[RMDB]
RNA sequence: GGGAACGACUCGAGUAGAGUCGAAAAGCUCCCCGAGCUGCAGCAGGCUGGAGACGGCAGGCUGGAAGACUGCCAGUGCCGACGAACUCAGGAACGGCACGUCGGGAUCAAACACGGCCACGUCCGUCCGCACGCGCGCCAUUAGCGUCCCCGGGGGACAAUCACACAGGUUCGCCUGUGUGAUUGUAAAAGAAACAACAACAACAAC
Reactivity to DMS in 0.01 (KOAc 150mM, MgCl2 10mM, bicine 150mM(pH8.5), 24C), signal-to-noise 1, nucleotides 027 to 156: g020c050u000c010c000c020c050g000a090g080c030u000g020c020a130g000c100a230g020g010c000u030g050g030a150g030a120c040g050g050c000a190g040g000c000u010g000g000a110a220g020a140c010u010g020c010c010a170g000u000g020c000c000g020a140c060g010a100a070c090u020c110a160g010g050a150a220c000g000g030c070a050c010g000u000c000g110g000g000a100u000c030a060a120a090c090a170c000g020g040c010c010a070c050g000u010c000c030g000u000c010c050g020c020a060c000g030c010g010c030g000c010c020a150u000u000a110g020c040g020u020c010c000c010c030g000g000g040g050g000
Reactivity to 2A3 in 0.01 (KOAc 150mM, MgCl2 10mM, bicine 150mM(pH8.5), 24C), signal-to-noise 4, nucleotides 027 to 156: g030c030u040c010c000c000c020g050a030g030c040u110g010c070a090g000c000a040g040g070c030u130g060g040a100g020a050c000g010g000c030a020g000g000c000u010g020g030a030a010g040a040c020u020g020c000c010a040g010u000g000c020c000g030a100c060g060a110a080c050u110c190a060g060g060a170a080c020g010g010c000a010c010g060u070c050g000g000g030a060u120c080a050a110a050c080a020c080g000g000c000c000a080c070g030u050c010c010g020u010c000c010g000c020a060c030g020c010g000c020g000c010c010a130u130u150a030g030c010g050u050c000c010c000c000g010g000g000g000g000

Description:
Chemical mapping of a 207-nucleotide RNA with DMS and 2A3. Reactivities are rounded to 0.1 and cut off at 0 and 3. The data come from the RNA Mapping Database (RMDB), library OK3TST. Values cover nucleotides 27 to 156. The DMS profile rests on 2,168 reads.